RNA sequence: GGGAACGACUCGAGUAGAGUCGAAAACAACAUUUGUCACAGCCAUGCUCACCGCCACGGACCGUAAACCCCUGAACGGAGGGGCGUCAGCAGUAGCUAGUGGCAUCAGUUACUGCUGUAAACCCGUGCCUCUACGGGUAUUCGUACCCGUAGAGGCAAAAGAAACAACAACAACAAC
Reactivity to 2A3 in 0.01 (KOAc 150mM, MgCl2 10mM, bicine 150mM(pH8.5), 24C), signal-to-noise 2, nucleotides 027 to 126: c070a030a010c090a100u090u090u140g050u090c020a020c010a060g020c040c000a040u090g000c000u000c010a060c030c000g000c000c040a050c020g050g080a090c000c000g090u160a050a050a080c010c000c010c020u010g090a040a010c030g030g040a030g020g010g000g000c010g050u010c000a020g000c010a000g000u000a000g030c000u020a030g000u000g110g040c040a030u060c000a040g000u000u000a020c020u010g050c000u030g000u030a100a020a000c020c010c020g000u030
Conditions: 150 mM KOAc, 10 mM MgCl2 and 150 mM bicine (pH 8.5), 24 C.
Structure probing data (2A3) for a 177-nucleotide construct.
The data come from the RNA Mapping Database (RMDB), library RFM100.